Conditions: 150 mM KOAc, 10 mM MgCl2 and 150 mM bicine (pH 8.5), 24 C. The record gives the reactivity of an RNA of 207 nucleotides to DMS and 2A3.
RNA sequence: GGGAACGACUCGAGUAGAGUCGAAAAGGGAUUUUCGAAUCCCGAAUCCUCCUAAGUCGUGAUGCUCGCAUUGCUGGAGCAUAUCGGAAACGAUAUGCGUUGAAAGCAAUGAACUACGAGCCAUCACGAUAUGGAUCUGCGUCACCUUCGGGUGAAAACAUCAAAUGCUAUUCGUAGCAUUUGAUGUAAAAGAAACAACAACAACAAC
Reactivity to DMS in 0.01 (KOAc 150mM, MgCl2 10mM, bicine 150mM(pH8.5), 24C), signal-to-noise 4, nucleotides 027 to 156: g010g020g020a010u000u000u010u020c260g010a050a020u000c000c000c010g000a030a050u000c040c020u000c030c020u000a090a270g010u000c010g040u000g020a040u010g020c010u000c010g000c000a060u000u000g020c020u000g000g000a300g010c010a000u000a010u000c000g020g010a180a150a300c010g000a020u000a000u000g010c000g000u000u000g000a170a180a070g020c010a010a060u010g010a110a200c030u000a080c000g000a020g030c100c040a010u000c000a010c000g010a000u000a100u000g000g010a100u000c080u000g010c030g010u000c000a020c010c000u000u000c300g050g000g020u010g000a020a080a120
Reactivity to 2A3 in 0.01 (KOAc 150mM, MgCl2 10mM, bicine 150mM(pH8.5), 24C), signal-to-noise 9, nucleotides 027 to 156: g020g000g010a010u060u070u110u240c300g090a080a000u000c000c000c000g000a000a040u030c000c000u030c010c000u090a150a050g010u000c000g000u010g000a000u000g000c000u000c000g010c010a000u000u000g000c000u010g000g020a010g000c000a000u000a000u000c010g060g020a130a040a040c010g000a000u000a000u000g000c010g140u180u050g030a020a010a000g000c000a000a000u010g010a050a040c090u150a060c040g010a000g010c100c000a000u000c000a000c000g000a000u000a010u010g010g000a060u020c060u260g120c090g110u020c010a010c020c000u080u150c300g100g000g000u010g000a050a020a000